RNA sequence: GGGAACGACUCGAGUAGAGUCGAAAACAUGAAGGAGCUCUUCGCGGAGCCCAAAGUGAAGAAGGAUGGCACGCUCAGCAAGGCAUGCCUCUACACACCUUUUCUCUCACGCGUGCAGAUCAAGGAGCAGAUAUUGAAGAUUCGUCUUCAAUAUCUGAAAAGAAACAACAACAACAAC
Reactivity to DMS in 0.01 (KOAc 150mM, MgCl2 10mM, bicine 150mM(pH8.5), 24C), signal-to-noise 9, nucleotides 027 to 126: c070a070u010g010a140a170g000g010a130g010c030u000c020u000u000c240g020c260g000g000a050g010c020c010c020a040a070a160g010u000g010a080a060g010a080a060g000g010a090u000g010g000c010a010c040g000c010u000c080a140g020c280a110a120g000g010c020a040u000g000c010c010u010c120u000a080c160a090c170a090c040c010u000u000u000u000c050u000c040u000c040a060c080g000c080g010u000g010c050a060g010a080u010c080a070a100g010g000a120g010
Reactivity to 2A3 in 0.01 (KOAc 150mM, MgCl2 10mM, bicine 150mM(pH8.5), 24C), signal-to-noise 9, nucleotides 027 to 126: c020a040u150g090a140a110g050g040a120g010c020u010c010u110u080c060g010c110g030g010a010g020c000c010c030a060a050a010g050u060g040a040a050g030a040a020g070g030a050u100g040g000c010a010c020g000c020u090c080a130g070c090a100a040g030g000c010a010u020g010c020c000u010c050u090a060c090a000c000a020c030c000u060u040u070u030c050u000c000u010c020a050c040g030c030g020u050g030c050a030g020a170u090c050a070a080g090g010a050g130
Chemical mapping of a 177-nucleotide RNA with DMS and 2A3. It was measured as part of the RMDB library OK2TRN. DMS adducts were read by reverse transcription with MarathonRT. 2A3 adducts were read by reverse transcription with SuperScript II with manganese.